[RMDB]
RNA sequence: GGGAACGACUCGAGUAGAGUCGAAAAGGCCCCAGCAGUCCGUGGAAUUCACCCUCUUACCGCUUCUCCACACUCCUUCCCCCCUGCGGGCUCCCCCCAUAAGAUGACGAGGACCCCACUCAUCGGGCGAGGUUAUCGUUCGCGAUAACCAAAAGAAACAACAACAACAAC
Reactivity to DMS in 0.01 (KOAc 150mM, MgCl2 10mM, bicine 150mM(pH8.5), 24C), signal-to-noise 9, nucleotides 027 to 129: g000g050c040c000c020c060a100g040c060a020g030u000c050c050g060u030g000g010a140a100u030u030c100a080c060c030c000u020c030u020u000a120c080c050g020c040u000u000c040u030c010c050a060c080a090c000u010c020c040u000u030c060c010c010c000c020c020u000g000c000g030g000g000c040u020c020c000c010c020c010c000a070u060a060a080g020a070u000g000a070c060g030a060g020g020a070c010c000c000c000a080c030u000c020a030u030c030g020g020g030c080g000a090
Reactivity to 2A3 in 0.01 (KOAc 150mM, MgCl2 10mM, bicine 150mM(pH8.5), 24C), signal-to-noise 7, nucleotides 027 to 129: g060g010c020c000c000c000a020g050c020a000g040u020c020c040g050u060g020g080a050a060u100u060c030a070c020c020c010u030c030u050u090a080c030c010g010c030u060u000c020u000c020c000a030c020a030c040u040c000c010u040u050c000c010c000c000c000c010u020g000c030g010g000g000c000u020c010c000c000c000c000c000a030u070a050a060g060a040u100g030a020c020g010a010g040g000a020c000c020c000c000a020c010u030c010a060u040c020g000g000g000c020g030a050